[RMDB]
RNA sequence: GGGAACGACUCGAGUAGAGUCGAAAAGUGGAUAGUUUCGACUAUCCACACAACUGAUGAUCUUACAGUGGAGGAUGAAGAAGAUGGGCAUCGGAUCCUCAAAUAGCACAGAGUUCGCUCUGUGCAACACGGUGAACGUCUUCGGACGUUCACCGUGAAAAGAAACAACAACAACAAC
Reactivity to 2A3 in 0.01 (KOAc 150mM, MgCl2 10mM, bicine 150mM(pH8.5), 24C), signal-to-noise 2, nucleotides 027 to 126: g000u000g010g000a000u000a000g020u020u070u090c210g010a030c010u000a000u020c020c000a000c010a000c000a010a010c030u080g000a060u070g010a040u080c010u020u200a050c090a070g090u120g120g080a060g110g020a080u110g040a040a130g010a000a010g050a060u150g060g020g000c000a020u010c010g020g020a030u000c010c020u060c030a030a020a110u180a020g010c000a000c000a000g010a000g000u030u080c150g030c080u010c000u000g000u000g000c000a000a000
Reactivity to DMS in 0.01 (KOAc 150mM, MgCl2 10mM, bicine 150mM(pH8.5), 24C), signal-to-noise 1, nucleotides 027 to 126: g010u030g000g020a000u020a000g000u000u010u010c300g050a060c000u000a000u000c000c000a010c000a060c120a070a110c050u010g000a040u010g000a080u000c040u000u000a050c070a040g010u000g000g000a100g000g020a060u000g040a150a170g000a110a070g030a070u000g000g000g030c060a020u000c050g020g010a080u000c010c000u000c230a050a040a050u000a020g000c000a000c010a040g010a000g000u020u050c210g020c000u000c000u000g000u000g060c010a060a110